[RMDB]
RNA sequence: GGGAACGACUCGAGUAGAGUCGAAAAGAUAUGGAUCCACAUAUGACAUGAAUGACAUCGGAAACGAUGUAACAUUCAACAGCAUAGUGGAUCCUAAGUCAAACUGUUCUACUUCGGUAGAACAGAAUCACUGAAUCAUGUUCGCAUGAUUCAGUGAAAAAGAAACAACAACAACAAC
Reactivity to 2A3 in 0.01 (KOAc 150mM, MgCl2 10mM, bicine 150mM(pH8.5), 24C), signal-to-noise 3, nucleotides 027 to 126: g010a010u020a010u080g000g000a000u020c000c020a000c030a170u060a000u050g080a080c170a280u230g000a000a000u010g010a000c010a010u000c000g000g010a010a010a010c000g010a000u030g010u030a050a050c020a010u010u000c040a150a100c180a240g000c000a010u010a020g000u000g000g000a000u010c010c000u000a010a000g010u000c020a060a080a140c010u010g010u000u000c010u020a020c020u040u050c300g150g020u010a000g010a010a010c000a010g020a010a090
Reactivity to DMS in 0.01 (KOAc 150mM, MgCl2 10mM, bicine 150mM(pH8.5), 24C), signal-to-noise 3, nucleotides 027 to 126: g010a010u000a070u010g010g000a010u000c000c000a000c020a080u000a010u010g010a040c150a170u010g000a020a010u020g000a170c000a010u000c000g010g010a040a020a090c010g010a030u010g000u010a100a160c010a000u010u000c000a070a050c180a150g000c000a000u000a010g000u000g000g000a020u000c000c000u000a010a060g010u000c000a120a110a260c020u000g000u000u010c000u010a000c000u000u020c210g000g000u000a010g010a000a000c010a010g000a090a100
Conditions: 150 mM KOAc, 10 mM MgCl2 and 150 mM bicine (pH 8.5), 24 C. Structure probing data (2A3 and DMS) for a 177-nucleotide construct. DMS adducts were read by reverse transcription with MarathonRT. For DMS, 3,390 sequencing reads were counted.